The record gives the reactivity of an RNA of 207 nucleotides to 2A3 and DMS. Source: RMDB library OK3TST, as collected in RNAgym. Conditions: 150 mM KOAc, 10 mM MgCl2 and 150 mM bicine (pH 8.5), 24 C.
RNA sequence: GGGAACGACUCGAGUAGAGUCGAAAAGAGCUGGCUAUGCUGGGACAAAUAACUUAGAUAAAUCACAAAUCAGAGUGGAGAAAUGAGGUGUUUUUAAUCAACAGCAUCCAACAAUGUGUGUUGAGUUUAACUGAAUCCAGGUAGAGGAGGGAGUGGACGUAAUCACCUGAUUCGUCAGGUGAUUACGAAAAGAAACAACAACAACAAC
Reactivity to 2A3 in 0.01 (KOAc 150mM, MgCl2 10mM, bicine 150mM(pH8.5), 24C), signal-to-noise 3, nucleotides 027 to 156: g050a010g000c040u030g030g000c040u060a020u120g020c020u020g020g000g000a010c060a020a150a040u210a050a030c120u060u110a020g010a060u150a100a110a050u130c030a040c040a120a160a040u080c040a050g020a040g080u060g030g000a060g030a030a090a040u150g000a050g030g000u020g010u010u060u020u010u090a050a040u040c010a010a010c000a000g000c000a000u020c070c020a040a030c030a100a090u030g050u020g030u000g000u020u010g020a050g060u070u100u070a070a060c030u020g070a040a010u000c030c010a010g000g060u050a030g030a040g030g010a020g020g010g000a050g000u040g010g020a000
Reactivity to DMS in 0.01 (KOAc 150mM, MgCl2 10mM, bicine 150mM(pH8.5), 24C), signal-to-noise 1, nucleotides 027 to 156: g000a090g070c040u000g040g020c050u000a100u010g050c100u040g000g010g000a160c080a090a120a080u000a090a050c050u000u010a070g020a080u000a110a060a110u000c040a090c010a060a120a150u020c010a050g020a110g000u000g020g010a060g000a110a060a130u000g010a200g020g010u000g030u000u000u000u000u000a060a140u020c010a020a020c010a130g020c020a010u010c040c010a090a080c150a070a010u000g030u020g050u000g050u000u000g020a030g010u000u000u000a000a150c090u000g010a040a030u000c050c020a090g000g010u010a070g010a050g000g010a120g010g020g000a100g010u000g040g010a110